[RMDB]
RNA sequence: GGGAACGACUCGAGUAGAGUCGAAAAUUUUGCCAAGGAGAGUAGAAUUAGGAAGUACCCAUAUACAUCCAGCCAGGAUCCACAUGGAGGACCUUUCUGAUGGCUGCAAUGACUAGGCCAUUCCUCUGAGUAACUCACAGUGUCCUUUUGUAGGCCAGCCCUAAAUAUAGUUCGCUAUAUUUAGGGCAAAAGAAACAACAACAACAAC
Reactivity to DMS in 0.01 (KOAc 150mM, MgCl2 10mM, bicine 150mM(pH8.5), 24C), signal-to-noise 2, nucleotides 027 to 156: u010u000u000u000g010c030c010a070a110g010g000a140g010a100g030u020a030g030a070a060u010u000a100g000g020a050a090g030u000a120c040c030c050a140u000a120u010a100c050a060u000c020c000a140g010c060c070a170g010g020a080u000c030c040a080c050a110u010g010g020a130g030g030a060c090c030u000u020u000c020u010g010a070u010g010g040c000u000g000c080a030a080u000g010a080c110u000a120g020g030c020c030a130u000u000c030c020u010c050u000g020a150g020u000a050a070c040u000c020a030c030a100g030u010g000u000c000c010u000u010u000u010g000u010a070g010g020c030c010a130
Reactivity to 2A3 in 0.01 (KOAc 150mM, MgCl2 10mM, bicine 150mM(pH8.5), 24C), signal-to-noise 3, nucleotides 027 to 156: u020u020u020u060g040c000c010a020a010g090g020a040g020a010g010u160a040g060a100a100u170u070a060g030g040a060a010g020u080a050c000c010c030a000u030a000u010a120c060a030u030c020c000a030g070c050c050a040g030g030a040u030c050c000a030c050a140u110g040g010a070g030g020a050c020c010u060u080u060c060u040g060a060u030g050g000c050u020g000c010a010a130u140g020a050c030u030a050g000g000c000c000a050u080u050c020c020u040c030u060g040a000g080u090a080a050c010u060c070a070c020a070g080u090g020u120c000c010u040u080u090u110g070u110a050g000g050c090c010a000
The record gives the reactivity of an RNA of 207 nucleotides to DMS and 2A3. Values cover nucleotides 27 to 156. The reactions ran in a buffer of 150 mM KOAc, 10 mM MgCl2 and 150 mM bicine (pH 8.5), at 24 C. DMS adducts were read by reverse transcription with MarathonRT. The DMS profile rests on 4,131 reads.